Structure probing data (2A3 and DMS) for a 177-nucleotide construct.
For DMS the reverse transcriptase was MarathonRT.
Reactivities are given for positions 27 through 126.
High 2A3 reactivity points to a flexible backbone, as in loops and unpaired stretches.
The 2A3 profile rests on 10,355 reads.
Conditions: 150 mM KOAc, 10 mM MgCl2 and 150 mM bicine (pH 8.5), 24 C.
RNA sequence: GGGAACGACUCGAGUAGAGUCGAAAAUACUAGUGAGGCAAAACUUCAUGUUAAACAAGAUACUCAAGUCAAUGGACAAAAGCAUAGACACUUUGUCUGAAAUAAGUGGAGCUGCUGAACUGGACAGUGUAAGUCCAAUAUUCGUAUUGGACUUACAAAAAGAAACAACAACAACAAC
Reactivity to 2A3 in 0.01 (KOAc 150mM, MgCl2 10mM, bicine 150mM(pH8.5), 24C), signal-to-noise 6, nucleotides 027 to 126: u130a030c020u020a000g010u010g010a020g020g000c010a010a020a080a090c020u010u010c000a010u080g060u140u110a060a100a020c030a030a020g020a060u090a090c040u050c150a080a080g040u040c010a020a120u110g040g020a050c040a060a130a010a010g070c020a060u070a110g080a040c010a000c080u030u050u050g010u000c020u030g050a070a110a060u090a100a000g000u000g000g010a010g000c010u000g000c010u000g010a010a000c010u010g010g020a040c030a060g080
Reactivity to DMS in 0.01 (KOAc 150mM, MgCl2 10mM, bicine 150mM(pH8.5), 24C), signal-to-noise 8, nucleotides 027 to 126: u010a120c030u000a030g020u000g010a300g000g010c020a050a060a110a170c010u000u000c010a020u000g000u000u010a070a100a080c110a100a060g010a060u010a030c130u010c150a060a130g010u000c030a070a060u010g000g000a060c100a060a060a090a150g000c020a040u000a100g010a060c050a070c140u010u000u000g000u000c020u000g000a060a110a050u010a030a150g010u000g000g010a030g040c080u000g000c020u000g000a180a030c020u000g010g010a110c190a080g010